[RMDB]
RNA sequence: GGGAACGACUCGAGUAGAGUCGAAAAGAUAUGGACGUGAACUACGGUGAGGUGCUCGAAGAACUCGAAUUUUAAUCGGAAACGAUUAAAAUUCGAGGGAGAGCAUGUAGCCGCACGUCCUAAGUCAUCUUUGAAAUAAGUUCGCUUAUUUCAAAGAAAAAGAAACAACAACAACAAC
Reactivity to DMS in 0.01 (KOAc 150mM, MgCl2 10mM, bicine 150mM(pH8.5), 24C), signal-to-noise 6, nucleotides 027 to 126: g000a050u000a300u020g000g000a000c000g020u010g000a140a100c130u010a300c030g000g010u000g010a230g020g010u000g010c000u000c010g000a120a170g010a140a250c000u000c000g010a010a000u000u000u000u000a010a010u010c000g010g000a130a120a240c000g010a010u000u000a000a000a000a000u000u000c000g000a010g000g000g000a080g000a020g010c000a010u000g000u000a300g000c010c010g000c010a010c010g000u000c010c000u000a010a060g020u010c030a140
Reactivity to 2A3 in 0.01 (KOAc 150mM, MgCl2 10mM, bicine 150mM(pH8.5), 24C), signal-to-noise 4, nucleotides 027 to 126: g040a020u090a060u220g010g000a010c020g000u000g030a200a190c160u180a080c300g020g050u060g020a140g140g060u010g010c000u020c020g300a300a070g020a130a060c010u000c000g000a000a000u040u000u000u000a000a010u000c000g020g030a090a050a050c020g000a000u000u010a010a000a000a010u000u000c000g010a000g000g000g020a020g000a000g000c000a010u220g000u010a010g000c020c000g000c010a000c000g000u000c010c000u010a070a000g010u000c010a060
Chemical mapping of a 177-nucleotide RNA with DMS and 2A3. The reactions ran in a buffer of 150 mM KOAc, 10 mM MgCl2 and 150 mM bicine (pH 8.5), at 24 C. DMS adducts were read by reverse transcription with MarathonRT. For DMS, 7,497 sequencing reads were counted.